[RMDB]
RNA sequence: GGGAACGACUCGAGUAGAGUCGAAAAAUUGCUGGCGGAGGAGCAUAUUGAUCAGGUCGAUCUCUUUAUCGCGGUCACUAACGAUGAUGAAGCCAAUAUCAUGUCCGCGAUGUUGGCUAAGCGGAUGUAUGCCGCAGGGAUUCGUCCCUGCGGCAUAAAAAGAAACAACAACAACAAC
Reactivity to DMS in 0.01 (KOAc 150mM, MgCl2 10mM, bicine 150mM(pH8.5), 24C), signal-to-noise 1, nucleotides 027 to 126: a100u000u040g000c020u000g010g010c100g000g020a040g000g040a050g000c130a010u000a030u030u050g000a170u010c090a100g060g000u000c100g000a130u050c020u000c000u000u030u050a030u030c150g000c100g020g000u020c050a080c170u020a080a020c140g000a100u030g020a130u030g020a120a050g020c060c000a000a010u000a000u000c000a050u010g020u020c000c010g030c100g020a020u000g010u000u000g000g000c060u000a130a060g000c060g000g000a050u020g000
Reactivity to 2A3 in 0.01 (KOAc 150mM, MgCl2 10mM, bicine 150mM(pH8.5), 24C), signal-to-noise 2, nucleotides 027 to 126: a000u110u020g000c010u010g030g020c000g060g010a090g000g000a120g000c120a000u070a070u240u120g060a050u110c020a040g020g050u030c000g020a080u000c060u000c050u020u180u000a180u010c000g030c000g130g000u020c000a000c000u060a120a000c100g030a090u250g000a060u090g080a010a000g000c020c000a040a050u080a000u090c030a020u140g180u230c020c000g020c010g080a000u060g020u010u100g000g000c050u000a100a050g010c040g020g050a000u070g100